[RMDB]
RNA sequence: GGGAACGACUCGAGUAGAGUCGAAAAUGAGAAGCAUUCGUGCUUCUCAGAAAUGCUGCCCAAAGAGGACCUGGGGGUGUCUCGGCUGCUAAACUCAUCAGCUAACCGCGAUCUUCGGAUCGCGGAAGGAUAAUAGUGUCUUCGGACACUAUUAUCCAAAAGAAACAACAACAACAAC
Reactivity to DMS in 0.01 (KOAc 150mM, MgCl2 10mM, bicine 150mM(pH8.5), 24C), signal-to-noise 3, nucleotides 027 to 126: u000g010a020g000a010a000g010c010a030u000u010c240g020u000g030c000u000u000c000u000c000a020g000a060a060a070u000g020c160u010g010c020c000c040a100a100a120g000a080g000g000a050c070c020u020g000g000g010g020g020u010g010u000c030u000c050g000g000c040u000g000c120u000a050a080a070c140u000c080a080u020c040a070g000c090u000a090a180c010c010g000c000g010a010u000c000u000u000c170g030g010a000u000c010g000c000g000g000a010a010
Reactivity to 2A3 in 0.01 (KOAc 150mM, MgCl2 10mM, bicine 150mM(pH8.5), 24C), signal-to-noise 3, nucleotides 027 to 126: u030g000a010g000a000a000g000c020a030u080u120c190g060u050g000c000u010u000c000u000c000a000g000a000a120a010u160g010c040u070g030c020c010c040a070a110a020g090a030g030g010a030c010c020u050g070g000g000g030g030u040g050u000c010u000c030g020g000c030u040g000c020u070a070a050a100c070u060c060a120u040c020a070g060c020u040a100a060c000c000g000c000g000a000u010c000u030u090c230g100g000a010u000c000g010c000g000g000a000a010